The record gives the reactivity of an RNA of 177 nucleotides to DMS.

[RMDB]
RNA sequence: GGGAACGACUCGAGUAGAGUCGAAAAGAUAUGGAGCGCGUAUAGAGAGGAAAACUACAGUUAACAUGGUCGGAAACGACCAUGGUAGCUGUAGUUUUCUACCCACCUCUAUGAUCGCUCCUAAGUCCACUAAAGCAAGCUUCGGCUUGCUUUAGUGAAAAGAAACAACAACAACAAC
Reactivity to DMS in 0.01 (KOAc 150mM, MgCl2 10mM, bicine 150mM(pH8.5), 24C), signal-to-noise 2, nucleotides 027 to 126: g010a080u000a300u010g000g000a020g040c000g030c300g040u000a020u000a010g000a010g010a140g030g000a010a000a000a000c000u000a000c010a030g010u000u000a010a030c000a000u000g020g000u020c000g000g000a180a100a220c020g000a060c000c000a000u000g000g000u010a000g000c010u000g000u000a000g000u000u000u010u000c000u000a010c080c040c100a300c160c000u000c000u000a000u000g010a090u000c000g000c000u010c000c010u000a010a140g010u000c040
DMS adducts were read by reverse transcription with MarathonRT. Reactivities are given for positions 27 through 126.